[RMDB]
RNA sequence: GGGAACGACUCGAGUAGAGUCGAAAAACCGUCGUCGCGUUUCGGGCUACAGCCUGUUGCUGGACUCUGUGAGACACCUGACCGACCGCUGAGCGACUGACUGGUCCACAGCGCCGGCAAGAUGAAGGACGUAAUUAUCGUUCGCGAUAAUUACGUCAAAAGAAACAACAACAACAAC
Reactivity to 2A3 in 0.01 (KOAc 150mM, MgCl2 10mM, bicine 150mM(pH8.5), 24C), signal-to-noise 2, nucleotides 027 to 126: a010c000c010g060u020c010g020u020c000g000c010g050u000u090u070c000g070g000g010c000u080a050c030a020g040c020c050u080g050u060u080g000c020u000g010g030a070c000u000c030u070g060u010g050a130g010a070c000a040c090c050u070g080a180c060c010g050a060c000c010g010c060u090g040a040g060c050g060a030c000u040g050a080c070u120g060g000u060c010c010a070c000a010g010c000g040c000c000g010g030c030a030a000g080a050u160g070a070a050g150
Reactivity to DMS in 0.01 (KOAc 150mM, MgCl2 10mM, bicine 150mM(pH8.5), 24C), signal-to-noise 2, nucleotides 027 to 126: a150c040c020g020u020c020g020u000c020g030c070g010u000u010u000c060g050g010g000c020u010a080c140a130g020c010c060u000g010u010u010g000c010u000g020g010a060c010u000c020u000g020u010g020a180g030a110c070a060c120c070u010g000a270c010c010g000a070c140c050g010c050u000g000a150g020c000g020a040c030u020g000a060c140u030g010g020u000c000c040a170c070a020g000c090g000c000c010g010g000c000a110a020g010a070u020g030a130a120g000